[RMDB]
RNA sequence: GGGAACGACUCGAGUAGAGUCGAAAACUCACUCACUACGGUGAGUGAGAAUCUUAAGGCUCAAUAAAGCUUGCCUUGAGGUCCCUCAAGCAGAUAUAGACUGAAACAUUUAGUAUGCGCAAGCAGGGAGCAACGGCUCGAGUACGCUCGAGCCGAAGUAUUAGGAUUUAUUCGUAAAUCCUAAUACAAAAGAAACAACAACAACAAC
Reactivity to 2A3 in 0.01 (KOAc 150mM, MgCl2 10mM, bicine 150mM(pH8.5), 24C), signal-to-noise 3, nucleotides 027 to 156: c000u000c000a000c000u010c000a010c010u020a030c230g130g010u010g000a000g010u000g000a020g010a010a020u030c020u020u040a020a010g030g000c010u020c080a070a140u150a280a160a020g050c070u050u060g000c000c000u000u010g010a020g010g040u090c060c030c000u030c040a050a030g020c020a020g070a030u090a070u090a230g110a090c040u060g040a120a090a000c030a050u030u180u150a090g030u110a040u110g030c070g000c020a010a050g020c020a040g080g000g020a010g010c040a060a060c020g000g000c020u000c000g000a020g000u030a050c210g030c030u000c000g000a000g000c010c000g000a000a010
Reactivity to DMS in 0.01 (KOAc 150mM, MgCl2 10mM, bicine 150mM(pH8.5), 24C), signal-to-noise 1, nucleotides 027 to 156: c010u000c010a030c010u010c010a020c000u010a100c290g100g030u020g000a020g040u000g010a000g040a030a020u000c050u000u000a000a100g010g010c010u000c020a080a130u000a140a090a130g090c070u000u000g000c000c010u060u000g000a100g040g010u010c030c030c020u010c050a100a090g060c010a050g010a160u000a110u000a130g040a140c030u000g000a210a040a110c050a200u000u000u000a100g000u000a030u000g030c020g000c110a060a110g000c010a050g020g000g020a070g010c020a100a200c010g000g000c010u000c000g000a030g040u000a090c210g020c060u000c000g030a040g030c000c010g010a010a040